[RMDB]
RNA sequence: GGGAACGACUCGAGUAGAGUCGAAAAGCAACGUCAAGCGAUGGGCGUUGCGCUCCAUAUUGUCUUACUUCCUUUUUUGAAUUACUGCAUAGCACAAUUGAUUCGUACGACGCCGACUUUGAUGAGUUCUUGUAUCAGACUUCGGUCUGAUACAAGAAAAAGAAACAACAACAACAAC
Reactivity to DMS in 0.01 (KOAc 150mM, MgCl2 10mM, bicine 150mM(pH8.5), 24C), signal-to-noise 1, nucleotides 027 to 126: g020c000a020a010c000g000u000c020a070a120g040c220g030a190u000g010g030g000c010g000u000u000g000c000g030c070u000c010c010a080u000a120u010u000g000u000c080u020u000a100c190u000u000c020c000u000u010u000u000u000u000g000a100a070u010u000a030c090u000g000c010a030u000a050g010c080a050c030a060a120u000u000g000a080u000u000c080g020u000a130c050g010a070c090g000c050c010g000a060c040u000u000u010g010a140u000g010a200g010u000
Reactivity to 2A3 in 0.01 (KOAc 150mM, MgCl2 10mM, bicine 150mM(pH8.5), 24C), signal-to-noise 2, nucleotides 027 to 126: g040c000a000a030c000g000u010c010a000a070g070c030g130a110u110g110g010g000c010g010u030u020g010c020g020c010u010c000c010a020u040a060u140u120g030u080c030u080u070a070c010u090u110c010c000u050u120u020u030u100u220g080a100a060u060u020a100c020u010g020c060a020u030a040g000c010a000c000a120a100u040u100g050a070u200u060c070g000u030a050c020g050a030c060g030c010c020g010a050c040u030u040u130g090a080u070g030a040g140u030
The record gives the reactivity of an RNA of 177 nucleotides to DMS and 2A3.
The DMS profile rests on 904 reads.
It was measured as part of the RMDB library RFMREP.